An RNA of 177 nucleotides, treated with 2A3 and DMS and read out base by base. The RNA was probed in 150 mM KOAc, 10 mM MgCl2 and 150 mM bicine (pH 8.5) at 24 C.

RNA sequence: GGGAACGACUCGAGUAGAGUCGAAAAUUGCUCUUUUAAGGCUGAUGCAGUGCUUUAAGAGGCUAACACAGAAGGGUAAAGUGAAUCUCCAUAAAACCCAGGGAGGAGAUUGUAAAACUUCUCUCUGGGUCGCAUAGUGAUUCGUCACUAUGCGACCAAAAGAAACAACAACAACAAC
Reactivity to 2A3 in 0.01 (KOAc 150mM, MgCl2 10mM, bicine 150mM(pH8.5), 24C), signal-to-noise 3, nucleotides 027 to 126: u010u040g010c010u000c000u120u000u000u000a020a000g000g000c000u040g130a140u260g150c130a040g200u040g150c000u040u010u010a010a000g000a000g000g040c060u040a070a000c010a000c000a030g140a100a020g060g010g010u160a060a060a010g020u070g090a080a240u050c060u020c000c000a020u160a160a100a000a000c000c000c000a000g000g000g010a000g000g000a000g010a030u050u130g130u180a000a030a090a110c000u000u000c010u010c000u000c020u010g020
Reactivity to DMS in 0.01 (KOAc 150mM, MgCl2 10mM, bicine 150mM(pH8.5), 24C), signal-to-noise 1, nucleotides 027 to 126: u030u020g010c010u000c000u010u010u010u000a010a030g000g020c000u020g010a240u020g040c200a030g000u010g000c020u000u000u030a000a020g000a030g020g000c030u000a010a050c050a020c040a050g010a150a110g020g010g070u000a030a090a120g020u010g000a110a080u030c050u000c000c020a120u020a010a070a040a080c000c000c000a000g000g000g000a010g010g000a010g000a110u010u030g050u050a030a090a020a030c000u000u000c010u000c000u000c010u000g000

It was measured as part of the RMDB library RFM100.